[RMDB]
RNA sequence: GGGAACGACUCGAGUAGAGUCGAAAAGCUUAAUAACCUGCGCUGAGCCCUUCUCCCCCAGCUUGCCUGUGUCCUAGGGAAUUGGAAGGUCAUCCUUCACAGGAUCGUGUUGAAGUCCUGCUCGGGGUCCAAACAUGGUAAUUCGUUACCAUGUUAAGGUAUAGGUAAGAUUCGUCUUACCUAUACCAAAAGAAACAACAACAACAAC
Reactivity to DMS in 0.01 (KOAc 150mM, MgCl2 10mM, bicine 150mM(pH8.5), 24C), signal-to-noise 3, nucleotides 027 to 156: g020c050u000u000a090a160u010a100a100c020c030u020g010c060g030c040u000g010a110g000c010c000c020u000u000c040u010c040c010c020c030c030a120g020c070u000u000g050c030c010u010g030u000g020u020c060c050u000a120g020g020g030a100a130u000u000g010g010a100a090g050g020u000c080a070u000c030c010u000u000c090a110c040a060g000g000a050u000c040g030u000g010u000u000g000a090a150g010u000c010c010u000g000c020u010c050g050g030g060g010u000c020c040a120a050a020c000a010u000g010g010u000a010a080u000u020c300g020u000u000a010c010c010a010u010g000u000u000a060a130
Reactivity to 2A3 in 0.01 (KOAc 150mM, MgCl2 10mM, bicine 150mM(pH8.5), 24C), signal-to-noise 2, nucleotides 027 to 156: g010c010u030u080a010a000u110a160a210c010c000u110g050c080g000c040u050g030a060g020c000c000c000u130u060c160u110c000c030c010c000c040a020g000c050u060u100g000c000c000u060g050u060g040u050c000c040u040a050g090g000g070a040a050u140u090g060g010a060a010g020g020u100c020a040u110c020c000u020u060c010a010c010a070g060g000a020u090c050g020u010g030u090u090g040a110a020g030u010c030c000u000g030c020u000c010g010g000g010g000u030c040c040a040a000a000c000a000u000g010g000u000a010a010u000u050c060g010u010u010a000c000c000a000u000g020u000u010a030a050